[RMDB]
RNA sequence: GGGAACGACUCGAGUAGAGUCGAAAACAGGAGAUCCGCAUAGCUCCAUUCUACUAUGCAUCUAGUCGUCGUUUUCGACGUCUAGUAUAGCCCGACACUGCUGGGGCGAUGAACAGCAGAUUACCACUACCCGUAGCGUGGGUUAUGGCUACGUACAACCACUAGCAUGAUUCGUCAUGCUAGUGGUAAAAGAAACAACAACAACAAC
Reactivity to DMS in 0.01 (KOAc 150mM, MgCl2 10mM, bicine 150mM(pH8.5), 24C), signal-to-noise 1, nucleotides 027 to 156: c040a110g040g000a120g000a060u020c100c160g000c000a040u000a020g000c010u000c070c210a210u000u000c020u000a010c020u000a000u000g000c020a200u000c020u020a010g000u000c010g000u010c010g010u010u010u000u010c020g020a020c000g020u000c000u000a010g000u000a030u010a120g000c000c010c040g030a050c040a160c020u000g060c050u000g010g000g020g000c020g020a100u020g010a070a130c040a060g000c000a000g010a130u000u010a040c030c000a090c020u010a110c000c000c020g010u000a070g060c110g010u010g050g010g030u000u000a010u000g000g010c020u010a020c030g030u000a090c050a120
Reactivity to 2A3 in 0.01 (KOAc 150mM, MgCl2 10mM, bicine 150mM(pH8.5), 24C), signal-to-noise 3, nucleotides 027 to 156: c030a000g020g000a020g020a050u090c120c040g040c010a010u010a020g000c010u030c030c040a120u140u040c020u080a110c000u010a010u030g020c010a040u000c000u000a000g000u010c000g000u000c010g070u070u080u120u300c010g000a000c000g000u010c000u000a000g010u040a050u100a050g020c000c000c000g090a050c060a030c090u030g000c010u000g000g000g040g000c050g120a170u230g080a100a040c010a000g000c000a000g010a070u040u180a060c030c010a020c050u090a060c060c020c020g030u030a030g040c020g040u140g000g050g040u060u130a070u070g030g000c010u010a010c040g080u060a020c020a030